[RMDB]
RNA sequence: GGGAACGACUCGAGUAGAGUCGAAAAUCGACGAACAGAAGGAUCUGGUACCGGGGAGGAAUAGCCCAUAGUACAAGGGGAGAUGCUAGGAGUCAGGGGAAGCCAGAACGACUGAGAAAGAAAAGAGAGCGUCCCGGGUUCGCCCGGGACAAAAGAAACAACAACAACAAC
Reactivity to 2A3 in 0.01 (KOAc 150mM, MgCl2 10mM, bicine 150mM(pH8.5), 24C), signal-to-noise 1, nucleotides 027 to 129: u040c000g000a120c000g000a080a020c000a050g020a030a000g050g020a030u070c030u050g000g010u050a110c000c000g000g010g000g000a040g000g000a000a170u040a000g000c000c050c000a040u090a010g080u110a030c090a060a000g020g000g050g000a010g040a000u090g020c030u000a050g010g020a000g000u110c030a100g070g000g000g000a110a000g040c030c000a000g000a030a000c050g020a010c010u000g000a000g010a070a050a010g000a010a060a010a040g040a000g000a000g000c000
Reactivity to DMS in 0.01 (KOAc 150mM, MgCl2 10mM, bicine 150mM(pH8.5), 24C), signal-to-noise 1, nucleotides 027 to 129: u010c060g060a090c080g000a090a010c070a120g020a050a050g020g020a080u000c050u000g030g010u020a020c060c000g000g000g030g020a060g000g000a020a080u130a180g000c010c000c050a120u090a000g020u100a150c180a120a060g040g000g000g000a040g020a080u030g000c050u000a030g040g000a090g000u000c010a110g040g000g050g000a000a050g000c070c010a120g050a130a050c170g110a060c090u030g010a040g030a080a050a070g000a090a020a080a000g000a050g030a060g010c000
Description: Structure probing data (2A3 and DMS) for a 170-nucleotide construct. Reactivities are given for positions 27 through 129. Conditions: 150 mM KOAc, 10 mM MgCl2 and 150 mM bicine (pH 8.5), 24 C. 2A3 adducts were read by reverse transcription with SuperScript II with manganese. The DMS profile rests on 1,950 reads.